Chemical mapping of a 207-nucleotide RNA with 2A3. Reactivities are given for positions 27 through 156. Source: RMDB library M2RFPK, as collected in RNAgym. The reactions ran in a buffer of 150 mM KOAc, 10 mM MgCl2 and 150 mM bicine (pH 8.5), at 24 C. For 2A3 the reverse transcriptase was SuperScript II with manganese.

RNA sequence: GGGAACGACUCGAGUAGAGUCGAAAAAGUUAGGUUCGCUAUGGUGCAACUCUUUAAGGCAAUAAGGAACUAAUUCUAAGCAAGUAAUGGAGAAAUGCCAGGGUCACUAUCUAGCCAUAAUAGUGCUGUAAGUGACUUAGAUUCGUCUAAGUCACAAGGUAUUCGCUGAGUUCGCUCAGCGAAUACCAAAAGAAACAACAACAACAAC
Reactivity to 2A3 in 0.01 (KOAc 150mM, MgCl2 10mM, bicine 150mM(pH8.5), 24C), signal-to-noise 1, nucleotides 027 to 156: a000g040u100u100a020g000g060u090u050c000g000c070u030a010u240g030g000u060g000c040a110a000c020u110c080u060u030u140a140a050g130g000c060a130a070u250a140a070g060g020a000a010c000u050a050a060u000u090c070u100a100a100g060c060a050a030g100u090a050a000u070g080g090a000g000a030a130a000u170g020c010c000a030g000g000g000u000c000a000c000u040a030u030c080u060a000g050c000c000a020u050a120a030u040a090g030u070g090c180u020g100u100a180a000g010u000g000a000c000u000u000a000g000a000u000u100c170g050u000c160u000a000a000g000u000c000a010c010a000a000